Source: RMDB library TTRDEL, as collected in RNAgym.
This 177-nucleotide RNA was probed chemically with DMS and 2A3.
High DMS reactivity at an A or C suggests that its Watson-Crick edge is free.
For DMS the reverse transcriptase was MarathonRT.
RNA sequence: GGGAACGACUCGAGUAGAGUCGAAAAGAUAUGGAGGUUCUAGGGAGAUUAGUCGGAAACGACAGGAUCUUUGAUCUAGACCUCCUAAGUCAAAAGUCCCUGUACAUCUUCGGAUGUACAGGGACAACAAUGUCAGUACGUUCGCGUACUGACAUUGAAAAGAAACAACAACAACAAC
Reactivity to DMS in 0.01 (KOAc 150mM, MgCl2 10mM, bicine 150mM(pH8.5), 24C), signal-to-noise 4, nucleotides 027 to 126: g000a050u000a300u000g000g000a010g000g010u000u010c010u000a010g010g000g000a020g020a010u000u000a090g020u010c000g020g010a090a060a150c010g020a010c010a100g010g000a010u000c000u010u000u020g000a100u020c000u000a010g000a030c010c000u000c000c000u000a010a060g000u010c020a070a090a140a150g000u000c000c000c000u000g010u000a000c000a010u000c000u000u020c190g020g000a020u000g010u000a000c000a000g000g000g000a000c010a010a020
Reactivity to 2A3 in 0.01 (KOAc 150mM, MgCl2 10mM, bicine 150mM(pH8.5), 24C), signal-to-noise 3, nucleotides 027 to 126: g030a020u080a040u150g010g000a010g050g000u300u100c010u010a000g030g040g000a040g000a010u010u030a020g010u000c000g010g030a070a050a040c010g010a000c000a030g260g200a010u010c000u150u120u150g100a080u030c000u010a000g000a000c000c000u010c000c000u000a000a010g030u000c020a000a020a050a190g010u000c010c000c000u010g000u010a000c000a000u000c020u050u080c300g150g000a000u000g000u010a000c000a000g010g000g000a000c000a000a000

The RNA was probed in 150 mM KOAc, 10 mM MgCl2 and 150 mM bicine (pH 8.5) at 24 C.